[RMDB]
RNA sequence: GGGAACGACUCGAGUAGAGUCGAAAACACUAUUGGUUCGCCAAUAGUGAAACGGCAAGCCGAAGCCGAACCGCAAGCCGAAGCCGAACGGCAACGGCAAAAAAACUGCGUUCUUCGGAACGCAGAAGAGAGGAUAAGAGUUCGCUCUUAUCCUCUCAAAAGAAACAACAACAACAAC
Reactivity to 2A3 in 0.01 (KOAc 150mM, MgCl2 10mM, bicine 150mM(pH8.5), 24C), signal-to-noise 2, nucleotides 027 to 126: c000a000c000u000a010u020u010g000g010u030u060c140g030c080c000a000a000u000a000g010u010g010a040a010a000c020g010g000c030a070a040g120c020c040g050a040a000g000c010c010g010a040a040c020c010g030c120a050a040g040c000c010g030a030a000g060c040c040g130a180a070c100g020g010c000a010a030c000g000g000c010a040a000a000a000a120a000a000c000u010g010c000g010u000u010c010u010u030c110g080g000a010a000c000g000c000a000g000a020a010
Reactivity to DMS in 0.01 (KOAc 150mM, MgCl2 10mM, bicine 150mM(pH8.5), 24C), signal-to-noise 3, nucleotides 027 to 126: c000a010c020u000a010u000u000g000g010u000u000c220g050c000c010a010a000u000a000g010u010g000a030a080a140c030g000g000c040a050a170g030c110c060g010a130a120g010c030c010g010a030a160c020c040g020c180a040a120g020c020c020g020a090a300g000c040c040g010a100a160c130g020g020c000a010a150c010g000g010c040a000a000a030a070a080a040a040c000u000g000c000g000u000u000c000u000u010c220g040g010a020a010c000g020c020a000g000a040a060